[RMDB]
RNA sequence: GGGAACGACUCGAGUAGAGUCGAAAAGGCUGCAGGGCAAUCACCGAUGACGGUGUUUCUGCGCUGACAGCGCUGCGUGAUCUGCAAUCGCUGGAGAUCAGGGACUGUGACAAGGUGUCAGAGGCGGCUUAAUCUUUUGUUUCGACAAAAGAUUAAGAAAAGAAACAACAACAACAAC
Reactivity to 2A3 in 0.01 (KOAc 150mM, MgCl2 10mM, bicine 150mM(pH8.5), 24C), signal-to-noise 7, nucleotides 027 to 126: g090g000c010u020g000c010a000g030g070g000c010a010a030u030c000a010c010c010g100a190u300g200a110c070g000g000u010g000u010u080u010c110u030g010c190g050c030u000g020a080c000a010g010c040g030c050u030g010c020g080u050g020a060u010c020u070g020c040a030a090u140c100g030c110u040g030g060a080g000a040u070c030a030g040g030g010a030c040u050g010u050g120a020c030a080a090g100g010u060g030u050c020a010g020a040g100g020c020g010g000
Reactivity to DMS in 0.01 (KOAc 150mM, MgCl2 10mM, bicine 150mM(pH8.5), 24C), signal-to-noise 9, nucleotides 027 to 126: g010g010c000u000g010c020a020g010g000g020c030a060a040u000c010a010c000c000g020a270u020g020a170c070g020g010u000g010u000u000u000c130u000g010c020g000c000u000g000a120c030a020g010c000g010c070u000g000c060g010u000g010a050u010c050u000g000c040a060a120u010c110g010c080u000g010g010a080g000a060u000c030a060g000g000g000a080c050u000g010u000g000a080c080a090a090g000g010u000g010u000c040a070g000a100g010g010c050g010g000